The record gives the reactivity of an RNA of 177 nucleotides to DMS and 2A3. DMS adducts were read by reverse transcription with MarathonRT. The reactions ran in a buffer of 150 mM KOAc, 10 mM MgCl2 and 150 mM bicine (pH 8.5), at 24 C. Source: RMDB library TTRINS, as collected in RNAgym.

RNA sequence: GGGAACGACUCGAGUAGAGUCGAAAAGAUAUGGAAAGUCGCUAGUUGUAUGACCCGCUUUGAUGCACGAUCGGAAACGAUCGUGUAUAUCGAAGCGCAUACAACUUGGACCGACUUUCCUAAGUCACUUACUAUCAGUGUUCGCACUGAUAGUAAGAAAAGAAACAACAACAACAAC
Reactivity to DMS in 0.01 (KOAc 150mM, MgCl2 10mM, bicine 150mM(pH8.5), 24C), signal-to-noise 6, nucleotides 027 to 126: g000a030u000a300u020g000g000a020a010a000g010u000c010g030c030u000a010g010u000u000g000u000a000u000g000a210c290c240c080g010c000u000u000u010g000a010u010g000c000a010c000g010a010u000c000g010g000a140a090a250c020g000a000u000c000g010u000g020u000a020u010a060u000c000g020a000a000g010c000g010c010a000u000a000c000a000a010c010u000u000g030g010a150c300c010g010a010c000u000u000u000c000c000u010a010a070g010u010c020a260
Reactivity to 2A3 in 0.01 (KOAc 150mM, MgCl2 10mM, bicine 150mM(pH8.5), 24C), signal-to-noise 3, nucleotides 027 to 126: g010a020u080a060u210g020g010a000a000a000g020u010c000g000c070u010a020g020u010u010g020u020a020u020g160a270c100c050c050g000c010u020u020u010g010a010u010g000c000a000c020g000a000u000c000g030g060a110a090a060c010g000a000u000c010g000u000g000u000a010u010a000u010c010g010a000a000g000c000g000c000a000u000a000c000a010a010c000u020u080g020g070a050c080c010g000a010c000u000u000u000c000c010u010a080a020g050u020c020a010